[RMDB]
RNA sequence: GGGAACGACUCGAGUAGAGUCGAAAAGCCAGAUCCUUCGGGAUCUGGCAAACAAGUGCAUGGUGAGGGCACUUGAUACCUCACCGACAAGCUGAAAGACAAAAAGCGGGUCGUUCGCGACCCGCAACCAUAAAGGGAGCUUCGGCUCCCUUUAUGGAAAAGAAACAACAACAACAAC
Reactivity to DMS in 0.01 (KOAc 150mM, MgCl2 10mM, bicine 150mM(pH8.5), 24C), signal-to-noise 1, nucleotides 027 to 126: g000c010c000a000g020a000u000c000c000u000u000c190g050g010g000a000u000c010u000g000g000c000a000a050a060c080a120a020g040u000g010c000a030u000g020g020u000g000a040g000g000g030c020a010c000u000u010g000a020u020a020c000c000u010c000a010c010c000g010a060c200a020a120g010c140u010g020a100a060a050g000a090c080a050a030a080a080a140g010c010g000g000g000u000c000g000u000u000c120g020c030g010a000c000c030c000g030c020a000a030